[RMDB]
RNA sequence: GGGAACGACUCGAGUAGAGUCGAAAACAUCGAGGGCAUGCCGGAUCGACUGCUCGCUGACGCGGUACACCAUCGCCGUGCCGGCCGAUUCCACGGUGGCGACGGUGGUCAGGUCGUCGGCCAGUUCUCUGGACUAGGCUUUCGAGCCUAGUCCAGAAAAAGAAACAACAACAACAAC
Reactivity to 2A3 in 0.01 (KOAc 150mM, MgCl2 10mM, bicine 150mM(pH8.5), 24C), signal-to-noise 1, nucleotides 027 to 126: c030a100u200c060g060a090g000g000g060c030a010u090g070c000c030g000g100a120u100c040g030a030c060u030g010c050u050c070g000c000u070g010a010c040g000c010g040g000u080a040c010a010c040c000a020u020c020g000c000c020g050u100g010c010c020g000g080c010c030g180a210u200u030c090c050a040c010g020g020u100g030g010c000g000a000c000g000g050u000g030g000u050c000a030g000g150u090c020g040u010c000g050g000c000c030a030g050u110u040c050
Reactivity to DMS in 0.01 (KOAc 150mM, MgCl2 10mM, bicine 150mM(pH8.5), 24C), signal-to-noise 1, nucleotides 027 to 126: c100a060u000c060g120a120g010g000g050c000a080u000g000c010c040g030g020a090u010c080g010a020c050u000g000c130u010c150g040c030u020g010a100c160g040c060g010g030u000a130c200a070c020c000a050u000c020g020c010c000g010u010g040c000c030g000g010c060c050g010a160u020u020c120c130a090c000g000g000u010g030g050c010g000a030c000g000g030u000g020g000u000c100a040g010g000u010c000g010u000c030g000g010c000c100a080g010u000u000c010
Source: RMDB library OK2TST, as collected in RNAgym. An RNA of 177 nucleotides, treated with 2A3 and DMS and read out base by base.